An RNA of 177 nucleotides, treated with DMS and 2A3 and read out base by base. For 2A3 the reverse transcriptase was SuperScript II with manganese.
[RMDB]
RNA sequence: GGGAACGACUCGAGUAGAGUCGAAAAUGGCUCCAGCGGGUUUGAGGUUGCUGCUGUCAGUAUCAAAUGUGACAUUGUUGGGCAUAUUCAACACGAUAUUAUCGCCCUGACGGGUCACGCUAACACCCAUUAGACAAAGGUUCGCCUUUGUCUAAUGAAAAGAAACAACAACAACAAC
Reactivity to DMS in 0.01 (KOAc 150mM, MgCl2 10mM, bicine 150mM(pH8.5), 24C), signal-to-noise 7, nucleotides 027 to 126: u010g010g010c010u000c100c030a050g020c040g020g010g000u000u000u010g010a100g010g000u000u000g020c020u000g010c040u000g010u000c040a050g010u000a090u010c110a060a090a100u010g010u000g000a020c030a100u010u000g040u000u010g000g000g010c010a050u000a030u000u000c070a080a110c250a160c260g000a060u010a030u010u010a040u000c180g010c010c010c000u010g030a030c030g020g000g000u000c010a000c030g010c160u000a050a090c130a100c070c050
Reactivity to 2A3 in 0.01 (KOAc 150mM, MgCl2 10mM, bicine 150mM(pH8.5), 24C), signal-to-noise 5, nucleotides 027 to 126: u050g010g000c010u010c030c000a020g020c030g020g080g000u050u090u190g110a070g080g010u120u100g020c010u010g010c010u020g040u030c020a040g050u060a050u190c060a030a060a080u160g000u030g010a020c040a140u140u140g020u030u020g030g000g010c020a000u030a040u050u080c070a140a140c100a060c300g030a040u030a050u250u090a050u080c090g010c010c010c040u020g010a000c010g040g010g000u000c000a010c000g000c010u040a060a010c020a080c050c020